[RMDB]
RNA sequence: GGGAACGACUCGAGUAGAGUCGAAAAGAUAUGGAUGUACUGACCUAUGAACUACGAGUAUCGGAAACGAUCCUCGCAUAGGCAAUGGUACAUCCUAAGUCAAAAGACUGGGCUUCGGCCCAGUCAACUAGACAUAUUACUUCGGUAAUAUGUCUAGAAAAGAAACAACAACAACAAC
Reactivity to DMS in 0.01 (KOAc 150mM, MgCl2 10mM, bicine 150mM(pH8.5), 24C), signal-to-noise 5, nucleotides 027 to 126: g010a040u010a300u010g000g010a010u000g010u000a000c000u000g020a090c020c000u000a000u000g000a110a090c150u020a300c040g000a020g000u000a020u000c000g000g000a130a110a180c010g000a010u000c040c000u010c000g000c010a010u000a000g010g010c120a060a040u000g000g010u000a020c000a010u000c000c000u000a020a110g010u010c020a100a110a130a110g030a000c000u010g010g010g010c020u000u020c220g030g010c000c000c000a000g000u000c010a030a110
Reactivity to 2A3 in 0.01 (KOAc 150mM, MgCl2 10mM, bicine 150mM(pH8.5), 24C), signal-to-noise 3, nucleotides 027 to 126: g020a010u070a060u120g010g000a000u010g000u010a000c010u130g300a290c000c000u000a010u040g050a130a170c100u150a060c300g000a000g010u000a000u000c010g010g030a070a050a040c010g010a000u020c010c010u010c000g030c000a010u000a000g000g020c030a020a070u170g000g020u000a000c000a000u000c000c000u000a030a020g020u010c020a000a010a110a170g000a000c000u000g000g000g030c000u060u180c300g070g000c000c000c000a000g000u000c000a000a000